[RMDB]
Overview:
The record gives the reactivity of an RNA of 177 nucleotides to 2A3 and DMS. The reactions ran in a buffer of 150 mM KOAc, 10 mM MgCl2 and 150 mM bicine (pH 8.5), at 24 C. 2A3 adducts were read by reverse transcription with SuperScript II with manganese. Source: RMDB library OK2TRN, as collected in RNAgym.
RNA sequence: GGGAACGACUCGAGUAGAGUCGAAAAUUGACACAGUUACAAUAAGGUUUCCUCAAAAUCUUGGACAAAAGAGAAAUGAAUGUCUGCCGGGACUGAAACCUUUGAGCAAUCAAGUUCUAGUUUGUCCGAAUUAACGUAUCUUCGGAUACGUUAAUUCAAAAGAAACAACAACAACAAC
Reactivity to 2A3 in 0.01 (KOAc 150mM, MgCl2 10mM, bicine 150mM(pH8.5), 24C), signal-to-noise 3, nucleotides 027 to 126: u040u050g030a030c040a010c030a170g070u140u160a080c030a060a040u070a100a040g100g050u010u010u000c020c000u110c030a030a060a030a130u050c040u080u140g000g010a000c010a010a020a010a010g060a020g010a020a020a030u060g040a090a040u090g050u050c030u030g050c040c020g050g040g030a100c070u160g090a120a080a100c010c000u050u090u190g050a070g000c000a030a020u040c020a110a110g000u030u000c010u020a020g070u020u010u030g000u010c010c020
Reactivity to DMS in 0.01 (KOAc 150mM, MgCl2 10mM, bicine 150mM(pH8.5), 24C), signal-to-noise 6, nucleotides 027 to 126: u000u010g010a110c110a120c160a120g010u010u010a080c070a060a050u000a080a100g020g010u000u000u000c010c030u000c220a090a060a090a080u010c060u010u000g010g010a020c010a000a020a020a020g010a020g000a030a040a040u000g000a080a070u000g010u010c050u000g020c170c180g000g000g010a050c070u010g000a100a090a090c050c020u000u000u010g020a110g010c030a040a060u000c020a040a120g000u000u000c010u000a030g010u000u000u000g000u000c010c030